Description:
The data come from the RNA Mapping Database (RMDB), library TTRDES. The record gives the reactivity of an RNA of 177 nucleotides to DMS and 2A3. The RNA was probed in 150 mM KOAc, 10 mM MgCl2 and 150 mM bicine (pH 8.5) at 24 C. 2A3 adducts were read by reverse transcription with SuperScript II with manganese.
RNA sequence: GGGAACGACUCGAGUAGAGUCGAAAAGAUAUGGAUUAGUUAUCAUAGAACUACGCUCCCUUCGGAAACGAAGGAAGAGCGCUAUGAAUUCUAAUCCUAAGUCAAAAGCCGAAGUUCGCUUCGGCAAGUGAUAUGGAUUGUUCGCAAUCCAUAUCACAAAAGAAACAACAACAACAAC
Reactivity to DMS in 0.01 (KOAc 150mM, MgCl2 10mM, bicine 150mM(pH8.5), 24C), signal-to-noise 3, nucleotides 027 to 126: g000a020u010a300u010g020g000a030u010u000a000g000u000u000a140u000c000a030u010a010g010a110a140c250u010a300c030g000c020u000c030c000c000u000u000c010g020g000a120a070a220c010g050a020a000g010g000a060a080g050a010g030c030g020c000u000a000u010g000a040a300u020u000c000u010a000a010u000c010c000u000a020a190g010u020c020a030a080a080a250g010c000c000g010a010a000g000u010u020c300g020c010u000u000c000g000g010c000a000a010
Reactivity to 2A3 in 0.01 (KOAc 150mM, MgCl2 10mM, bicine 150mM(pH8.5), 24C), signal-to-noise 2, nucleotides 027 to 126: g020a020u110a040u180g000g000a010u000u030a020g030u110u110a260u280c020a000u010a030g040a190a130c150u180a090c300g000c000u000c000c010c000u000u010c020g020g000a070a090a080c010g010a000a020g020g000a100a110g000a010g020c000g000c010u010a020u000g010a040a280u060u040c000u010a000a000u050c000c000u010a140a010g060u020c040a000a060a160a140g030c000c000g000a010a000g040u100u230c300g030c200u030u000c000g010g030c000a000a020